The data come from the RNA Mapping Database (RMDB), library OK2TST. Chemical mapping of a 177-nucleotide RNA with 2A3 and DMS. For DMS, 5,632 sequencing reads were counted. For 2A3, 3,575 sequencing reads were counted. The reactions ran in a buffer of 150 mM KOAc, 10 mM MgCl2 and 150 mM bicine (pH 8.5), at 24 C.
RNA sequence: GGGAACGACUCGAGUAGAGUCGAAAAGGGGUCAGGAUCUAACGAGGGACCCAACAGUCGCAGAACAUGCUUCCUUAGUAGGUCUUCUUUUGAGUCUGUACAGGCUAAGUAAGAUUUCUGGGCAGAAACCCUGUACGAUAUUCGUAUCGUACAGGGUAAAAGAAACAACAACAACAAC
Reactivity to 2A3 in 0.01 (KOAc 150mM, MgCl2 10mM, bicine 150mM(pH8.5), 24C), signal-to-noise 2, nucleotides 027 to 126: g040g000g010g040u040c020a020g160g000a120u030c030u130a050a060c050g020a100g010g050g030a020c000c000c030a000a010c030a010g020u010c030g040c150a010g010a060a020c050a100u170g040c000u020u010c010c020u020u010a030g010u020a030g020g100u000c000u060u050c020u060u220u090u240g070a030g020u020c010u050g060u040a050c090a080g040g080c020u000a010a000g010u020a030a020g010a020u020u040u010c020u010g010g010g010c020a030g120a050a060
Reactivity to DMS in 0.01 (KOAc 150mM, MgCl2 10mM, bicine 150mM(pH8.5), 24C), signal-to-noise 5, nucleotides 027 to 126: g000g000g010g010u010c030a080g010g000a070u000c070u000a110a100c160g010a140g000g000g000a050c050c010c020a090a080c160a070g010u000c140g010c020a030g000a060a080c300a050u000g010c010u000u000c040c020u000u000a050g010u010a090g010g000u000c020u000u010c030u000u000u020u020g000a050g000u000c030u000g010u010a040c140a040g010g000c040u000a020a050g010u000a050a040g000a060u000u000u010c010u000g000g000g010c050a090g000a090a100